[RMDB]
RNA sequence: GGGAACGACUCGAGUAGAGUCGAAAACUGGGCAGGUGCUUCCAUAGCCAGGCUGUUUACCUGGGGUCUCCAGCUACCUCUGCCCUCAGUUUCCUGAUGGGCCAACUCUGAAUACCCAGGCGACAAACACCAUAGGCAUAUUCGUAUGCCUAUGGUGAAAAGAAACAACAACAACAAC
Reactivity to DMS in 0.01 (KOAc 150mM, MgCl2 10mM, bicine 150mM(pH8.5), 24C), signal-to-noise 4, nucleotides 027 to 126: c040u000g010g000g020c030a040g020g020u000g000c040u010u010c080c070a100u010a110g020c020c050a070g010g030c070u000g000u020u000u000a100c040c010u000g000g000g000g000u010c070u000c050c050a030g000c070u000a060c080c050u000c090u000g010c010c010c020u000c050a020g010u010u010u000c110c020u000g010a070u010g010g000g010c030c140a060a060c090u000c040u010g010a080a120u000a140c030c010c010a050g010g000c120g000a060c110a090a080a210
Reactivity to 2A3 in 0.01 (KOAc 150mM, MgCl2 10mM, bicine 150mM(pH8.5), 24C), signal-to-noise 2, nucleotides 027 to 126: c020u040g000g010g050c010a040g000g030u050g040c030u120u000c050c010a110u110a050g060c010c010a030g000g010c020u100g080u240u150u140a050c000c000u000g000g040g050g000u030c050u030c070c020a000g030c030u070a090c010c020u050c060u070g010c020c010c000u020c020a010g000u020u090u110c010c000u020g010a100u190g000g000g000c050c010a050a050c050u080c050u130g040a030a020u090a100c000c010c000a010g020g050c030g010a020c050a000a120a010
The record gives the reactivity of an RNA of 177 nucleotides to DMS and 2A3. The RNA was probed in 150 mM KOAc, 10 mM MgCl2 and 150 mM bicine (pH 8.5) at 24 C. High 2A3 reactivity points to a flexible backbone, as in loops and unpaired stretches. The 2A3 profile rests on 3,292 reads. For DMS, 4,770 sequencing reads were counted. In probing experiments dimethyl sulfate is read out at A N1 and C N3, which are open when not base-paired.